RNA sequence: GGGAACGACUCGAGUAGAGUCGAAAAUUAAGUGCCUGAAUUUGUUCUUACACAAAGCAAGUGCUCUCAAGAAGCUCAUUCUUGAAGAUGGUUGAGAAAUAUCAAUGACCAAUAUCAAAAGAACAUUAACCCAUGAAAUGUACAUGAAUAUGGCCAAGCACCGUAUCCUAUUCGUAGGAUACGGUGCAAAAGAAACAACAACAACAAC
Reactivity to 2A3 in 0.01 (KOAc 150mM, MgCl2 10mM, bicine 150mM(pH8.5), 24C), signal-to-noise 2, nucleotides 027 to 156: u080u040a150a090g020u040g050c010c010u080g040a140a170u020u030u040g010u000u000c010u020u160a010c030a000c010a030a160a030g060c020a030a150g030u060g160c000u000c000u000c010a000a000g020a020a000g070c040u110c160a200u070u020c010u010u010g010a040a040g020a050u080g040g000u010u060g040a030g090a120a160a070u230a080u120c060a060a040u170g020a020c000c030a000a010u030a010u160c020a000a170a000a000g030a000a000c000a000u110u090a020a020c050c020c000a020u100g070a110a100a150u130g010u090a080c020a060u010g000a010a000u060a050u060g000g000c010c010a040a040